An RNA of 177 nucleotides, treated with DMS and 2A3 and read out base by base.
As a SHAPE reagent, 2A3 marks flexible, mostly unpaired nucleotides at the ribose 2'-OH.
DMS adducts were read by reverse transcription with MarathonRT.
The data come from the RNA Mapping Database (RMDB), library M2PK90.
The 2A3 profile rests on 11,170 reads.
Conditions: 150 mM KOAc, 10 mM MgCl2 and 150 mM bicine (pH 8.5), 24 C.
RNA sequence: GGGAACGACUCGAGUAGAGUCGAAAAAGCAACGAGUGUGUGUGGGACGUUUUAUCCCAAGCUCUGAGUAGAGCACGCGCUCACACACACCGCGAGCGAGGAUCAGCAGAGCGCAAACGCUGGUAAACCACGAAUAGAUUUUCGAAUCUAUUCGUGGAAAAGAAACAACAACAACAAC
Reactivity to DMS in 0.01 (KOAc 150mM, MgCl2 10mM, bicine 150mM(pH8.5), 24C), signal-to-noise 7, nucleotides 027 to 126: a120g010c040a180a050c020g000a260g020u000g010u000g010u000g020u000g010g000g010a080c010g010u000u010u000u010a130u000c030c040c020a100a130g010c010u000c000u000g010a170g030u010a080g010a020g010c010a090c100g000c050g010c000u000c000a000c000a010c010a010c000a010c000c010g010c030g000a220g010c020g000a120g000g010a040u010c020a030g010c020a090g000a110g020c100g010c130a060a080a120c110g000c010u000g010g010u010a060a090a190
Reactivity to 2A3 in 0.01 (KOAc 150mM, MgCl2 10mM, bicine 150mM(pH8.5), 24C), signal-to-noise 4, nucleotides 027 to 126: a000g060c040a040a060c010g020a100g050u000g000u000g000u000g000u010g020g010g050a050c010g020u000u040u130u220a170u110c010c020c010a010a010g000c000u000c020u090g260a220g160u300a010g190a000g000c010a010c040g040c010g020c000u010c000a000c000a000c000a000c000a000c000c000g030c020g020a020g000c020g040a060g020g070a040u040c010a010g010c020a020g050a040g130c070g000c090a130a040a010c080g000c020u010g000g030u050a090a060a040